The record gives the reactivity of an RNA of 177 nucleotides to 2A3 and DMS.
Values cover nucleotides 27 to 126.
For 2A3, 5,840 sequencing reads were counted.
Conditions: 150 mM KOAc, 10 mM MgCl2 and 150 mM bicine (pH 8.5), 24 C.
RNA sequence: GGGAACGACUCGAGUAGAGUCGAAAAGAUAUGGAUUUGCAAGCACUCAGCUCGGAAACGAGCUGAGGUGAACUACUUGCUUAUCCUAAGUCAAACUCCUCCCCUCGGUUCGCCGAGGGGAGGAGAAGCAUUUUAUAACGUUCGCGUUAUAAAAUGCAAAAGAAACAACAACAACAAC
Reactivity to 2A3 in 0.01 (KOAc 150mM, MgCl2 10mM, bicine 150mM(pH8.5), 24C), signal-to-noise 2, nucleotides 027 to 126: g060a020u070a050u150g010g000a000u010u010u010g010c010a000a000g000c010a030c030u010c010a010g000c000u000c010g050g000a090a100a080c010g010a000g020c010u000g010a010g000g010u010g000a030a060c040u100a050c000u140u010g000c000u020u020a010u000c000c010u010a100a020g050u050c050a040a050a180c000u010c000c000u000c020c020c000c030u010c020g020g050u080u050c260g020c110c030g030a000g000g010g000g010a000g010g000a010g000a000a000
Reactivity to DMS in 0.01 (KOAc 150mM, MgCl2 10mM, bicine 150mM(pH8.5), 24C), signal-to-noise 2, nucleotides 027 to 126: g000a030u000a290u010g000g000a020u000u000u000g000c000a020a010g010c040a100c000u000c000a000g010c010u000c000g010g000a080a060a150c000g010a010g020c000u010g010a000g000g030u010g030a090a170c220u000a120c000u010u000g010c000u010u000a000u000c010c000u000a050a120g000u000c030a110a100a200c010u000c000c000u000c000c020c000c000u000c000g000g000u000u020c250g020c000c000g030a020g000g000g000g000a000g010g000a000g000a020a060